[RMDB]
Chemical mapping of a 177-nucleotide RNA with 2A3 and DMS.
DMS adducts were read by reverse transcription with MarathonRT.
For 2A3 the reverse transcriptase was SuperScript II with manganese.
It was measured as part of the RMDB library TTRINS.
RNA sequence: GGGAACGACUCGAGUAGAGUCGAAAAGAUAUGGAACAUGACCCGUUACGAAGCUCAACAGCUCCUUCUAGCUUCGGAAACGAAGCUAGAAGGAGACAUGAGCUAAGUAACGCAUGUUCCUAAGUCACAUUUCCUAUAUGUUCGCAUAUAGGAAAUGAAAAGAAACAACAACAACAAC
Reactivity to 2A3 in 0.01 (KOAc 150mM, MgCl2 10mM, bicine 150mM(pH8.5), 24C), signal-to-noise 3, nucleotides 027 to 126: g030a020u100a070u230g000g000a000a010c010a000u020g210a250c110c120c020g000u000u000a010c010g020a070a020g010c000u000c010a050a160c060a300g040c010u010c010c000u000u000c000u000a000g000c000u000u010c000g010g030a050a060a020c010g000a000a000g000c000u000a000g010a000a000g000g000a000g000a000c000a060u020g000a000g000c000u000a010a000g000u000a000a000c010g000c000a010u000g010u000u010c000c000u010a160a020g080u040c020a010
Reactivity to DMS in 0.01 (KOAc 150mM, MgCl2 10mM, bicine 150mM(pH8.5), 24C), signal-to-noise 8, nucleotides 027 to 126: g010a040u000a300u020g010g010a010a000c000a010u010g000a240c210c270c090g000u000u000a000c000g000a300a090g000c010u010c010a040a090c300a190g010c000u000c000c000u000u000c000u010a010g010c000u000u000c000g020g010a090a100a230c000g010a020a000g010c000u000a000g010a010a010g000g010a000g000a000c070a120u000g000a010g010c000u000a020a300g000u000a000a010c000g020c020a000u000g010u000u000c000c000u000a020a060g010u000c040a290